Chemical mapping of a 177-nucleotide RNA with DMS and 2A3. DMS adducts were read by reverse transcription with MarathonRT. For 2A3, 6,218 sequencing reads were counted. It was measured as part of the RMDB library TTRDEL.

[RMDB]
RNA sequence: GGGAACGACUCGAGUAGAGUCGAAAAGAUAUGGAACUGACCAGGGAGAGGGACUCGGAAACGAGUCCUCUUUGAUCUGGGAGGUUCCUAAGUCAAACCCCGAUAAGAGUUCGCUCUUAUCGGGGAACAAAUCAUGUGUGUUCGCACACAUGAUUUGAAAAGAAACAACAACAACAAC
Reactivity to DMS in 0.01 (KOAc 150mM, MgCl2 10mM, bicine 150mM(pH8.5), 24C), signal-to-noise 4, nucleotides 027 to 126: g000a070u000a300u000g000g000a000a010c010u010g000a300c010c010a010g010g000g000a180g010a020g010g000g000a000c000u000c000g000g010a050a070a140c000g010a000g010u000c000c000u000c010u000u000u000g010a180u010c010u000g000g000g000a300g000g000u010u000c000c000u000a010a080g000u000c040a120a110a250c000c000c000c000g000a010u000a010a010g000a000g010u000u000c300g010c000u000c000u000u000a000u000c000g010g000g000g000a010a020
Reactivity to 2A3 in 0.01 (KOAc 150mM, MgCl2 10mM, bicine 150mM(pH8.5), 24C), signal-to-noise 2, nucleotides 027 to 126: g010a010u050a030u120g010g000a000a020c010u020g000a030c020c000a010g060g060g050a070g010a010g050g100g040a060c010u010c010g030g020a020a070a040c010g020a010g010u000c000c010u020c010u030u030u090g060a060u040c000u000g020g020g000a040g000g000u000u010c000c000u000a020a000g000u000c000a050a090a260c000c000c000c000g000a000u000a000a000g010a000g030u070u130c230g070c090u000c010u000u000a000u000c000g000g000g000g000a000a000